[RMDB]
RNA sequence: GGGAACGACUCGAGUAGAGUCGAAAACGAAGUGGCACGCGUGGCAUCAGAGAAACGCGUUGAUGAUCCACGGCGUUACCGUUACCCGAUUGUGGUGCUCACGGUGCCCCGGCAAUCCGGCAAGACGCCUGGAUUCGCUAUUCGUAGCGAAUCCAGGAAAAGAAACAACAACAACAAC
Reactivity to 2A3 in 0.01 (KOAc 150mM, MgCl2 10mM, bicine 150mM(pH8.5), 24C), signal-to-noise 1, nucleotides 027 to 126: c020g040a150a000g070u080g010g000c000a020c060g140c020g030u000g000g030c030a040u010c010a070g110a010g050a100a120a050c100g000c040g030u010u040g020a120u040g030a050u090c050c030a010c020g030g040c020g030u000u050a060c030c000g020u070u090a160c000c000c050g030a030u050u240g130u070g060g000u020g000c020u050c110a020c040g030g090u050g010c010c050c000c000g000g000c020a020a060u040c010c000g000g000c020a020a050g100a050c030g020
Reactivity to DMS in 0.01 (KOAc 150mM, MgCl2 10mM, bicine 150mM(pH8.5), 24C), signal-to-noise 1, nucleotides 027 to 126: c050g000a110a060g040u020g010g020c080a020c010g030c010g030u010g010g000c030a020u010c060a040g030a180g000a090a080a060c080g040c110g000u000u010g000a100u000g000a140u010c060c010a030c000g000g000c030g010u000u000a100c080c000g000u000u010a080c050c020c000g000a160u010u000g040u000g000g020u000g010c040u000c030a050c030g030g000u000g000c020c020c040c050g000g000c080a070a060u010c010c000g000g030c090a080a100g010a100c200g000